Description: The record gives the reactivity of an RNA of 207 nucleotides to 2A3. The data come from the RNA Mapping Database (RMDB), library M2RFPK.

RNA sequence: GGGAACGACUCGAGUAGAGUCGAAAAGAAAGAAAGAAGAAUCACCAGGAGGCAAGGAUCCUCAACUACGUUAUUCGCGCACCUUGAGUUGAGAGGAGCUAGUGGUGCGCCCGGCCUGGAGAUCAAAACACGACAGGCGGGUUCGCCCGCCUGUCAAGAAUCUUGCCUAGUUCGCUAGGCAAGAUUCAAAAGAAACAACAACAACAAC
Reactivity to 2A3 in 0.01 (KOAc 150mM, MgCl2 10mM, bicine 150mM(pH8.5), 24C), signal-to-noise 2, nucleotides 027 to 156: g080a020a110a000g020a040a160a000g090a060a000g050a070a010u040c010a010c050c010a000g030g010a010g010g030c010a010a260g030g010a000u010c000c000u000c000a020a030c000u300a110c040g120u130u120a080u170u170c090g000c000g010c000a000c010c020u100u160g070a000g020u000u010g020a020g000a010g040g020a010g000c010u040a040g090u030g030g000u000g000c000g000c010c000c000g090g010c000c000u010g020g010a000g000a000u050c020a000a060a030a070c100a040c110g000a000c000a010g020g030c000g000g010g000u020u040c090g090c000c000c000g020c010c000u000g010u000c000a000a000